[RMDB]
RNA sequence: GGGAACGACUCGAGUAGAGUCGAAAAGUUUGGCACGUGGUGGCCCUGCGGUGUUCUUCCCACUACCCCACACUGCUACCUGCAAAGCACAACUGGGGAGGUUCAGGGCGUCCUUCCAGUCUUUGCAUGCCAUAAGCUGUUUCGACAGCUUAUGGCAAAAAGAAACAACAACAACAAC
Reactivity to DMS in 0.01 (KOAc 150mM, MgCl2 10mM, bicine 150mM(pH8.5), 24C), signal-to-noise 1, nucleotides 027 to 126: g020u000u020u000g040g000c070a170c160g020u010g020g060u000g010g000c000c020c080u010g010c080g010g000u000g020u000u010c170u000u010c040c010c000a100c160u020a270c020c000c010c000a050c040a080c100u010g000c010u000a090c060c010u000g020c070a110a070a120g000c300a150c090a130a080c130u020g040g000g000g010a030g000g000u030u040c080a090g030g000g040c070g000u000c010c000u000u000c030c020a080g010u000c040u000u000u010g000c030a130